RNA sequence: GGGAACGACUCGAGUAGAGUCGAAAAGUAUCCCUAGAUGAUAAAACACCGCACAUGGCUCGUAAGAGCGGUUAAAUUAGCAAGUAAUGCAAAUUACGCGAGGUAACGCAUGGCCUAGGCCCGUUAGAAAAGGGAGAAUCCUUCGGGAUUCUCCCAACACCAAGAUUAACUUCGGUUAAUCUUGGUGAAAAGAAACAACAACAACAAC
Reactivity to 2A3 in 0.01 (KOAc 150mM, MgCl2 10mM, bicine 150mM(pH8.5), 24C), signal-to-noise 2, nucleotides 027 to 156: g110u100a090u130c000c010c010u020a040g060a200u170g030a050u120a110a110a060a000c050a020c000c030g060c000a040c020a170u130g100g000c050u050c060g030u040a070a030g010a020g060c000g000g000u020u050a100a130a040u050u100a030g020c090a130a000g030u150a100a020u170g070c100a040a090a080u090u070a050c060g000c020g030a020g020g060u000a010a010c020g030c090a090u040g010g000c020c010u030a030g040g150c000c000c010g020u050u030a040g080a030a130a000a000g000g000g000a000g010a000a000u000c010c000u040u060c120g030g000g000a020u000u000c000u000c000c000c000a000a000
Reactivity to DMS in 0.01 (KOAc 150mM, MgCl2 10mM, bicine 150mM(pH8.5), 24C), signal-to-noise 2, nucleotides 027 to 156: g050u000a080u000c010c010c000u000a170g010a090u000g010a130u010a050a040a150a170c050a070c000c000g080c030a160c100a100u000g030g070c020u010c060g010u000a150a150g000a090g020c020g000g050u000u000a040a060a160u010u000a130g040c010a050a100g030u000a080a040u010g000c160a100a130a050u020u010a050c050g040c010g000a170g040g030u000a030a050c030g010c080a110u020g000g000c020c010u000a110g020g050c010c000c030g000u000u010a110g000a070a100a130a140g040g000g050a030g000a020a010u000c020c000u030u010c300g050g020g000a010u000u000c000u000c000c000c000a010a010
Chemical mapping of a 207-nucleotide RNA with 2A3 and DMS. The DMS profile rests on 2,960 reads. Source: RMDB library M2RFPK, as collected in RNAgym. Conditions: 150 mM KOAc, 10 mM MgCl2 and 150 mM bicine (pH 8.5), 24 C. As a SHAPE reagent, 2A3 marks flexible, mostly unpaired nucleotides at the ribose 2'-OH.